An RNA of 177 nucleotides, treated with 2A3 and DMS and read out base by base. DMS (dimethyl sulfate) methylates the pairing face of unpaired adenines and cytosines. The RNA was probed in 150 mM KOAc, 10 mM MgCl2 and 150 mM bicine (pH 8.5) at 24 C.
[RMDB]
RNA sequence: GGGAACGACUCGAGUAGAGUCGAAAAGAUAUGGACUGCCUGGGAGCUGUUCGGAAACGAAUACAGCAUCGAUCAGGACAGUCCUAAGUCAAACCCCUAUACACGAGUUCGCUCGUGUAUAGGGGAACACGCUAUAGCCGUUCGCGGCUAUAGCGUGAAAAGAAACAACAACAACAAC
Reactivity to 2A3 in 0.01 (KOAc 150mM, MgCl2 10mM, bicine 150mM(pH8.5), 24C), signal-to-noise 1, nucleotides 027 to 126: g030a010u070a040u150g000g000a000c000u000g030c000c000u040g000g000g040a030g000c000u020g030u040u020c020g020g010a070a090a040c010g000a030a010u230a240c000a000g020c020a140u300c080g140a120u090c020a000g000g110a110c010a000g000u000c000c000u010a060a000g000u030c020a020a040a300c000c030c000c010u000a000u000a000c000a010c010g020a020g050u110u070c290g150c210u000c000g000u030g000u000a000u000a010g000g000g010g000a000a010
Reactivity to DMS in 0.01 (KOAc 150mM, MgCl2 10mM, bicine 150mM(pH8.5), 24C), signal-to-noise 1, nucleotides 027 to 126: g000a050u000a300u010g000g000a020c000u000g010c020c000u010g010g000g020a080g040c020u000g020u010u000c010g000g000a130a060a170c000g000a040a070u000a050c010a010g010c000a160u000c170g000a040u000c020a000g000g000a090c000a010g020u010c000c000u000a000a040g010u020c040a180a210a160c000c000c000c010u000a000u000a000c000a010c000g000a030g000u000u020c300g020c000u000c000g010u010g010u000a000u010a010g000g020g010g000a020a020
For 2A3 the reverse transcriptase was SuperScript II with manganese. DMS adducts were read by reverse transcription with MarathonRT.